[RMDB]
RNA sequence: GGGAACGACUCGAGUAGAGUCGAAAAUUUCGGAAAGAUCGCCACUGCUGGGGAUUCGUUUUUCUUCAGCAGCCCAUUCUCCGAGGUCGAUCAGCUGACAACGUUUGGAGCAAAAUGGCCGAAACGGUAUCGGUAGAGUUUUCGAACUCUACCGAUAAAAAGAAACAACAACAACAAC
Reactivity to DMS in 0.01 (KOAc 150mM, MgCl2 10mM, bicine 150mM(pH8.5), 24C), signal-to-noise 5, nucleotides 027 to 126: u010u000u010c040g000g010a130a120a100g010a040u000c030g020c020c060a300c010u000g000c010u010g000g000g000g000a030u020u010c300g000u000u000u000u000u000c000u000u000c000a010g000c010a020g020c080c030c020a120u010u010c120u000c020c010g010a070g000g020u010c020g000a060u000c030a160g030c170u020g020a120c080a090a070c090g010u000u000u000g020g020a110g030c200a030a040a060a120u010g010g010c040c000g000a030a040a030c100g010g020
Reactivity to 2A3 in 0.01 (KOAc 150mM, MgCl2 10mM, bicine 150mM(pH8.5), 24C), signal-to-noise 2, nucleotides 027 to 126: u050u050u050c010g030g040a300a080a030g010a030u020c010g000c030c010a020c000u000g010c000u000g060g000g000g000a020u060u000c140g150u140u200u000u070u000c000u020u020c000a000g000c010a000g000c000c000c000a060u160u020c040u000c010c010g000a020g000g010u210c020g000a060u050c020a030g020c050u100g080a030c030a100a040c080g030u020u070u070g070g020a090g030c070a090a090a150a180u130g120g000c000c020g080a030a000a010c030g070g000